Structure probing data (DMS and 2A3) for a 177-nucleotide construct. For 2A3 the reverse transcriptase was SuperScript II with manganese.
[RMDB]
RNA sequence: GGGAACGACUCGAGUAGAGUCGAAAAGUGCAACGGGCGGCCACGUGACGGUGACCAACGUCAUGCUGUGCAACGAGGAACUUUUGGGGAAUGAGCUGUAUGAACUCAAUGCCAGCAAGGUCACUAAGGGGUAUAAAUGAUUCGUCAUUUAUACCCCAAAAGAAACAACAACAACAAC
Reactivity to DMS in 0.01 (KOAc 150mM, MgCl2 10mM, bicine 150mM(pH8.5), 24C), signal-to-noise 5, nucleotides 027 to 126: g020u010g000c040a080a060c090g000g000g020c020g010g000c020c040a060c020g010u000g010a040c070g000g010u010g010a030c030c020a100a090c100g000u000c140a090u000g000c040u000g000u010g040c010a040a040c300g000a040g010g010a080a120c100u000u000u010u010g020g010g020g010a130a110u010g000a060g020c060u000g010u000a070u010g010a130a190c040u000c010a030a290u000g000c010c010a030g000c030a030a070g020g000u010c020a060c040u030a100a100
Reactivity to 2A3 in 0.01 (KOAc 150mM, MgCl2 10mM, bicine 150mM(pH8.5), 24C), signal-to-noise 3, nucleotides 027 to 126: g050u060g040c030a070a050c050g010g020g020c030g010g000c000c000a020c020g030u030g040a020c050g040g020u000g010a010c010c020a070a050c030g050u070c090a100u070g000c010u050g070u190g030c000a020a020c050g010a010g030g040a040a120c030u120u100u170u210g050g000g000g090a100a120u130g020a080g060c040u020g060u160a130u120g080a040a010c000u000c020a030a060u030g020c000c000a000g000c000a020a020g000g000u020c010a000c020u020a120a080